[RMDB]
RNA sequence: GGGAACGACUCGAGUAGAGUCGAAAAUAACACUGGCGGCUGCGUAUCACUCUAGGGUACGUGAUAGUGCGAUAUAAGAAGCACUGGUACAUGCCGGCAGGGACAGUUAAGAGAUGGCGGCAGUCUCAAAAGGGGUCAUUCUUCGGAAUGACCCCAACAGAAUAAUGGACUUCGGUCCAUUAUUCUGAAAAGAAACAACAACAACAAC
Reactivity to 2A3 in 0.01 (KOAc 150mM, MgCl2 10mM, bicine 150mM(pH8.5), 24C), signal-to-noise 3, nucleotides 027 to 156: u100a040a020c020a000c050u040g150g000c000g000g010c000u030g000c020g000u010a020u010c040a070c240u130c120u170a150g110g020g000u010a000c010g010u030g050a080u100a040g000u010g000c010g030a030u020a010u060a300a070g130a090a010g010c010a000c000u010g010g020u080a070c050a040u120g000c010c010g030g010c000a000g000g000g030a040c040a040g010u050u080a110a010g010a000g000a010u050g050g050c060g040g020c050a010g050u040c010u010c030a020a050a020a070g000g000g000g000u000c000a000u000u000c000u030u060c200g010g000a000a000u000g000a000c000c000c010c000a000a000
Reactivity to DMS in 0.01 (KOAc 150mM, MgCl2 10mM, bicine 150mM(pH8.5), 24C), signal-to-noise 3, nucleotides 027 to 156: u000a070a090c020a060c010u000g000g010c000g030g040c010u020g030c020g020u010a020u010c010a080c090u000c150u010a150g010g030g010u000a010c030g030u010g020a150u000a020g010u000g020c000g010a190u010a170u010a120a210g000a220a280g000c000a000c020u010g020g020u000a070c080a100u000g010c030c000g030g010c030a060g020g000g000a060c080a110g030u000u000a060a130g010a090g020a070u000g030g000c000g010g010c050a110g000u000c000u000c030a050a040a100a140g020g000g070g050u000c000a000u010u000c010u010u000c300g030g010a010a030u000g000a010c000c000c010c000a010a010